[RMDB]
Source: RMDB library TTRINS, as collected in RNAgym. Chemical mapping of a 177-nucleotide RNA with 2A3 and DMS. DMS adducts were read by reverse transcription with MarathonRT.
RNA sequence: GGGAACGACUCGAGUAGAGUCGAAAAGAUAUGGACUAAGAGAGACUUGGACCCGUCGUUCCGUACGUAACAUCAAUCGGAAACGAUUGUGGUACGGAACGACGGCUAGUCUCCUUAGUCCUAAGUCCGACUAACUCAACUUCGGUUGAGUUAGUCGAAAAGAAACAACAACAACAAC
Reactivity to 2A3 in 0.01 (KOAc 150mM, MgCl2 10mM, bicine 150mM(pH8.5), 24C), signal-to-noise 1, nucleotides 027 to 126: g060a010u120a050u200g020g000a000c000u000a010a000g300a040g000a010g010a090c010u090u240g110g130a200c080c010c010g000u000c020g000u010u010c050c020g000u000a000c030g070u150a170a110c030a300u300c010a010a030u000c020g100g000a140a100a040c050g010a010u030u000g030u050g070g000u010a010c000g000g010a000a000c010g000a010c000g000g000c000u000a000g000u010c010u000c000c000u010u000a000g010u000c000c000u000a000a000g010u000c000
Reactivity to DMS in 0.01 (KOAc 150mM, MgCl2 10mM, bicine 150mM(pH8.5), 24C), signal-to-noise 1, nucleotides 027 to 126: g000a120u030a300u000g030g000a010c000u000a000a020g020a240g020a000g060a010c000u020u030g020g000a150c300c010c000g000u000c030g010u000u010c000c030g010u000a010c080g030u030a090a100c250a020u060c000a000a000u000c000g000g010a130a090a290c010g010a000u000u000g070u000g000g030u000a010c000g000g020a000a000c000g020a000c000g010g000c000u010a000g000u000c000u000c010c000u000u020a010g000u000c000c000u010a010a100g000u000c010